The record gives the reactivity of an RNA of 207 nucleotides to DMS and 2A3.
Conditions: 150 mM KOAc, 10 mM MgCl2 and 150 mM bicine (pH 8.5), 24 C.
DMS adducts were read by reverse transcription with MarathonRT.
The 2A3 profile rests on 4,277 reads.
The data come from the RNA Mapping Database (RMDB), library OK3TST.

[RMDB]
RNA sequence: GGGAACGACUCGAGUAGAGUCGAAAACGAAUCCAUCCGAAUCGCUGCCUGCUGACUGGGUCAUCUGGACUGUGACUGCACUGGCACUCAUCGCAACUGGAAAUAUCGUUGAUAUACUCCUCAACAAUGGAACGCUUGCGCUAGUUAGCUAUGUGGGCCCGGAUAGAUAAUUCGUUAUCUAUCCGGGAAAAGAAACAACAACAACAAC
Reactivity to DMS in 0.01 (KOAc 150mM, MgCl2 10mM, bicine 150mM(pH8.5), 24C), signal-to-noise 2, nucleotides 027 to 156: c060g000a110a120u000c020c010a080u000c020c030g030a060a080u010c050g040c030u000g020c020c030u000g010c050u000g010a080c050u000g000g000g030u000c030a060u000c070u000g020g000a080c050u000g030u000g000a070c040u010g000c060a050c030u010g020g020c030a110c020u010c030a080u000c030g020c020a090a110c300u000g020g000a060a100a180u020a050u000c060g020u000u000g010a060u030a090u000a040c070u010c110c180u010c020a060a060c040a030a030u000g020g020a040a090c030g020c040u000u010g020c040g030c040u000a110g000u000u000a100g010c020u000a030u000g000u000g000g020g040
Reactivity to 2A3 in 0.01 (KOAc 150mM, MgCl2 10mM, bicine 150mM(pH8.5), 24C), signal-to-noise 5, nucleotides 027 to 156: c030g030a020a040u050c020c010a030u050c030c020g090a070a090u070c080g030c060u050g030c020c010u050g050c010u070g050a110c040u070g040g010g020u030c010a060u050c090u070g060g060a080c040u040g020u050g060a040c020u020g020c000a020c060u030g050g000c010a020c020u050c020a050u060c030g000c040a010a070c050u040g030g050a050a070a020u100a040u030c070g050u030u070g030a010u040a020u020a180c040u080c020c010u040c020a020a060c020a050a090u120g040g030a060a030c030g020c070u040u070g000c010g000c040u010a020g030u120u070a030g000c010u040a030u190g050u050g000g060g010